[RMDB]
RNA sequence: GGGAACGACUCGAGUAGAGUCGAAAAUGCUUGCCAAAGUUUUCCGCUAAUUAUCGCAGAAGGCAAGGAUAUAAUCCCACUCCAUUUCCUUUGGCGACCAUCAAAAAUGGCACUUGGCAGCGGAAAAGCAUGAUCCAUCAUUCGUGAUGGAUCAUGCAAAAGAAACAACAACAACAAC
Reactivity to DMS in 0.01 (KOAc 150mM, MgCl2 10mM, bicine 150mM(pH8.5), 24C), signal-to-noise 2, nucleotides 027 to 126: u000g000c060u020u010g000c020c020a090a020a130g020u030u000u020u000c040c010g000c020u000a090a230u030u020a130u000c080g000c020a050g000a060a000g000g020c170a020a020g010g000a030u000a040u020a160a060u000c000c040c000a280c130u000c000c020a080u000u000u040c020c000u000u010u050g030g000c010g000a040c070c010a050u050c170a110a030a090a280a040u000g010g000c100a090c130u000u000g000g020c100a000g010c010g000g000a000a000a000a180
Reactivity to 2A3 in 0.01 (KOAc 150mM, MgCl2 10mM, bicine 150mM(pH8.5), 24C), signal-to-noise 3, nucleotides 027 to 126: u100g040c000u010u050g000c010c010a120a060a110g070u060u030u090u020c010c010g000c020u060a140a200u140u120a060u150c030g010c040a020g020a120a010g020g000c030a000a000g010g030a000u030a000u010a180a080u010c000c000c010a010c030u000c000c040a240u040u060u060c000c010u030u030u020g080g000c000g010a020c020c020a020u110c090a030a020a090a040a020u030g010g000c030a070c030u020u050g010g000c030a000g000c030g000g000a010a010a000a030